The record gives the reactivity of an RNA of 177 nucleotides to DMS and 2A3.
Conditions: 150 mM KOAc, 10 mM MgCl2 and 150 mM bicine (pH 8.5), 24 C.
RNA sequence: GGGAACGACUCGAGUAGAGUCGAAAACUGUCAGGUGGGAUAACCCUUCCCUGUUCCUCCGUUUGGAGGGCAGAUAGAACAUGAUGACUGGAGAUGCAUGAAAUGUGACUAAUGUCUCUGUGUAAUCUUAUAGAAGAGACUUCGGUCUCUUCUAUAAAAAAGAAACAACAACAACAAC
Reactivity to DMS in 0.01 (KOAc 150mM, MgCl2 10mM, bicine 150mM(pH8.5), 24C), signal-to-noise 8, nucleotides 027 to 126: c060u000g010u020c040a050g010g030u010g000g010g000a130u020a090a110c060c020c020u000u000c040c030c000u000g010u010u020c010c000u000c010c010g020u010u040u040g020g010a010g010g000g000c010a010g000a080u020a050g000a100a080c080a040u010g010a080u010g000a060c040u010g010g010a070g010a060u010g000c040a020u000g010a070a090a130u010g010u000g000a070c050u020a090a080u010g000u000c020u000c010u000g000u000g000u000a070a050u010c050
Reactivity to 2A3 in 0.01 (KOAc 150mM, MgCl2 10mM, bicine 150mM(pH8.5), 24C), signal-to-noise 6, nucleotides 027 to 126: c040u030g050u080c030a030g000g060u040g020g070g020a110u090a180a140c000c000c000u030u050c030c000c000u020g010u210u250c000c000u000c010c020g150u110u200u300g010g000a010g000g000g000c010a000g000a010u130a020g120a050a010c030a090u100g020a020u060g030a040c020u030g020g020a040g010a030u060g020c020a020u080g100a120a160a060u170g080u060g050a050c040u110a090a050u160g000u010c000u000c000u030g040u010g010u070a080a070u040c000